The data come from the RNA Mapping Database (RMDB), library OK3TST. The record gives the reactivity of an RNA of 207 nucleotides to DMS and 2A3. For 2A3, 2,567 sequencing reads were counted. For DMS the reverse transcriptase was MarathonRT. The RNA was probed in 150 mM KOAc, 10 mM MgCl2 and 150 mM bicine (pH 8.5) at 24 C.
RNA sequence: GGGAACGACUCGAGUAGAGUCGAAAAAGCAAAUAGCUAGCGUUAAAGAUAUAGAAGCUAGAAUGCUACUUCAAAUGGUAUAUAUAGACCAACUUGAAAUCUGGCAGAUAUGUGACAAGAUGGGGAUUAGUAAAGCUACAUACUAUGUUAAAUUAAGUGUAUGUUAGCUAUUCGUAGCUAACAUACAAAAAGAAACAACAACAACAAC
Reactivity to DMS in 0.01 (KOAc 150mM, MgCl2 10mM, bicine 150mM(pH8.5), 24C), signal-to-noise 3, nucleotides 027 to 156: a030g010c050a030a070a080u000a150g040c020u000a040g020c020g020u000u000a070a120a140g010a130u000a140u000a160g000a150a100g020c000u000a070g010a110a130u000g020c000u000a050c080u000u000c010a040a020a110u000g020g030u010a070u010a150u000a190u000a180g000a070c030c010a020a110c090u000u010g000a020a080a110u000c060u000g070g080c080a060g000a000u000a050u000g020u010g020a060c070a060a120g020a080u000g010g010g000g010a090u000u000a060g020u000a030a040a060g020c020u010a020c020a090u000a050c060u000a080u000g010u000u000a070a100a100u000u000a090a120g030
Reactivity to 2A3 in 0.01 (KOAc 150mM, MgCl2 10mM, bicine 150mM(pH8.5), 24C), signal-to-noise 5, nucleotides 027 to 156: a000g070c090a080a080a020u090a050g010c010u000a000g000c020g070u130u160a220a170a050g030a030u130a010u070a190g110a090a010g000c010u000a010g020a030a030u060g010c010u020a050c020u010u060c010a020a050a070u070g000g020u020a070u010a030u010a020u070a250g070a040c000c010a020a070c040u020u040g060a030a060a080u060c050u030g020g020c010a000g020a040u090a040u110g040u050g030a040c050a090a030g020a050u060g000g010g000g030a010u020u050a030g030u050a030a120a020g040c020u060a010c010a080u140a050c030u170a070u140g040u100u110a130a130a110u180u190a090a020g020